[RMDB]
RNA sequence: GGGAACGACUCGAGUAGAGUCGAAAAGUGUGGACGCCGCCGUUUGAGGAUCGAAACACUAAAUUGAAUCAAACUAGCUUAUUUCUUGCGUGUCUGUCCGCUGGAGGUAAGUGAAAUUAAAGACCAGACUAAACGUGUAGUGCUGAAGAUGGAGUAAGUAUUACUCUUGGUUCGCCAAGAGUAAUACAAAAGAAACAACAACAACAAC
Reactivity to DMS in 0.01 (KOAc 150mM, MgCl2 10mM, bicine 150mM(pH8.5), 24C), signal-to-noise 4, nucleotides 027 to 156: g020u010g030u010g000g000a190c080g030c020c010g010c030c100g000u000u050u000g010a100g010g010a090u000c040g010a300a140a080c020a090c040u010a050a070a170u000u000g020a110a160u000c040a080a070a080c040u000a290g010c020u000u000a040u000u000u000c010u000u000g030c020g020u010g020u000c070u020g030u010c070c020g010c000u010g010g020a020g000g010u000a020a020g020u000g010a070a070a080u000u000a030a050a150g010a130c040c050a080g020a090c070u000a040a060a060c060g020u010g010u000a060g020u000g010c020u000g020a050a060g000a060u000g000g010a060g030u000a070a270
Reactivity to 2A3 in 0.01 (KOAc 150mM, MgCl2 10mM, bicine 150mM(pH8.5), 24C), signal-to-noise 7, nucleotides 027 to 156: g010u010g000u010g010g030a020c050g010c010c000g010c030c060g000u000u000u020g010a020g000g000a020u070c030g030a010a040a000c020a010c050u130a060a090a120u200u240g040a010a020u050c010a010a000a010c000u010a010g010c000u010u010a010u000u050u010c010u020u060g000c000g000u040g030u000c020u030g040u010c010c010g000c010u030g010g000a000g010g010u000a010a000g000u010g010a020a010a010u120u120a070a040a010g050a030c050c080a020g010a010c040u080a060a110a050c070g030u050g050u120a070g020u050g070c040u040g030a060a030g020a070u090g030g010a050g040u090a160a030

Structure probing data (DMS and 2A3) for a 207-nucleotide construct. DMS adducts were read by reverse transcription with MarathonRT. For DMS, 8,453 sequencing reads were counted. It was measured as part of the RMDB library ARCHII. For 2A3 the reverse transcriptase was SuperScript II with manganese.